[RMDB]
RNA sequence: GGGAACGACUCGAGUAGAGUCGAAAAACUGAGAUUCAAGGAGUUGGGAGACCUCACCCACAGUCACGUGGAUCCUAACUGGCUGAGAUGAGUUUUGGGCUCCUGCUGGGCUGUUGGGACCCAGAGGAUGCCCGCUACUUUUCGAAGUAGCGGGCAUAAAAGAAACAACAACAACAAC
Reactivity to 2A3 in 0.01 (KOAc 150mM, MgCl2 10mM, bicine 150mM(pH8.5), 24C), signal-to-noise 1, nucleotides 027 to 126: a030c070u100g010a020g000a150u040u100c020a090a110g060g000a070g100u060u050g040g010g030a010g050a070c000c030u000c040a060c000c000c000a040c010a030g080u070c020a010c300g010u000g000g040a020u030c020c010u040a010a060c030u050g140g060c040u050g040a070g010a220u130g020a020g050u020u040u110u080g070g010g000c010u010c040c000u100g080c020u040g000g000g040c000u060g090u290u090g020g020g000a000c020c000c010a000g030a010g020g000
Reactivity to DMS in 0.01 (KOAc 150mM, MgCl2 10mM, bicine 150mM(pH8.5), 24C), signal-to-noise 2, nucleotides 027 to 126: a070c070u000g010a100g010a100u010u010c060a090a120g000g000a060g020u010u000g000g010g000a080g000a090c080c040u020c090a110c070c000c010a040c040a080g010u000c110a050c180g030u000g000g000a160u000c020c000u000a040a010c090u010g020g020c060u000g010a170g010a120u000g000a050g010u000u000u010u000g020g010g010c070u000c000c010u020g020c020u000g000g000g000c030u010g010u010u010g020g000g000a140c000c010c010a050g010a050g000g000
This 177-nucleotide RNA was probed chemically with 2A3 and DMS. The reactions ran in a buffer of 150 mM KOAc, 10 mM MgCl2 and 150 mM bicine (pH 8.5), at 24 C. It was measured as part of the RMDB library OK2TST. For DMS, 2,612 sequencing reads were counted. The 2A3 profile rests on 833 reads.